[RMDB]
RNA sequence: GGGAACGACUCGAGUAGAGUCGAAAAGAAAGAAAGAAAGUUCAUUGUUUAUCGGAAACGUUAAACUAUAACCAUUCAAACUUUUCCAGAAGUUAGUUUGAAUAGAAAUUAAAAAGAAACUUCUGAAUAACCUUAUCAUGCUUCGGCAUGAUAAGAACUUCAAAAGUACGUUCGCGUACUUUUGAAGAAAAGAAACAACAACAACAAC
Reactivity to 2A3 in 0.01 (KOAc 150mM, MgCl2 10mM, bicine 150mM(pH8.5), 24C), signal-to-noise 2, nucleotides 027 to 156: g030a000a020a010g100a050a070a020g070a120a130a040g050u100u120c080a050u130u080g000u000u010u010a010u020c000g020g050a070a030a050c010g010u000u000a000a000a010c000u020a000u020a110a020c010c010a020u000u000c000a000a000a000c010u040u000u010u020c120c000a010g000a010a000g000u000u020a000g000u020u000u000g010a020a010u120a220g020a000a080a030u200u220a070a050a000a000a000g000a000a000a000c000u000u000c000u000g010a000a040u050a020a000c010c000u000u000a000u000c000a000u000g000c000u030u030c090g080g000c000a000u000g010a000u000a000a000g000a000a010